[RMDB]
RNA sequence: GGGAACGACUCGAGUAGAGUCGAAAAGAUAUGGACACGCGAGGAGCAACAGCGUAUGGUCUCGGAAACGAGACCUACGACAUGCUCCUCGUCCUAAGUCAAACCCGGUGGGUUCGCCCACCGGGAACGUAGCUAGAACCUUCGGGUUCUAGCUACGAAAAGAAACAACAACAACAAC
Reactivity to 2A3 in 0.01 (KOAc 150mM, MgCl2 10mM, bicine 150mM(pH8.5), 24C), signal-to-noise 2, nucleotides 027 to 126: g020a000u170a030u250g070g020a020c040a020c280g090c090g040a010g000g020a000g060c010a050a090c090a170g080c000g000u060a070u300g000g000u010c000u000c000g020g030a030a150a020c020g000a040g000a000c030c000u030a000c000g040a050c010a010u050g010c000u040c000c000u000c000g000u000c000c000u030a100a020g030u010c090a010a040a260c020c000c040g000g000u010g000g090g000u040u120c290g080c030c000c020a010c010c000g000g020g010a000a010
Reactivity to DMS in 0.01 (KOAc 150mM, MgCl2 10mM, bicine 150mM(pH8.5), 24C), signal-to-noise 1, nucleotides 027 to 126: g000a070u020a210u020g000g010a100c040a100c300g020c040g000a010g000g040a000g030c000a060a070c300a080g040c000g000u000a010u010g040g010u000c000u040c000g000g000a020a070a200c030g000a020g040a010c000c000u000a020c020g000a080c120a130u000g000c000u020c000c000u000c000g000u000c000c010u010a090a130g010u000c010a090a100a130c010c000c010g000g030u000g010g000g000u000u000c130g000c000c010c000a010c010c010g010g030g010a000a000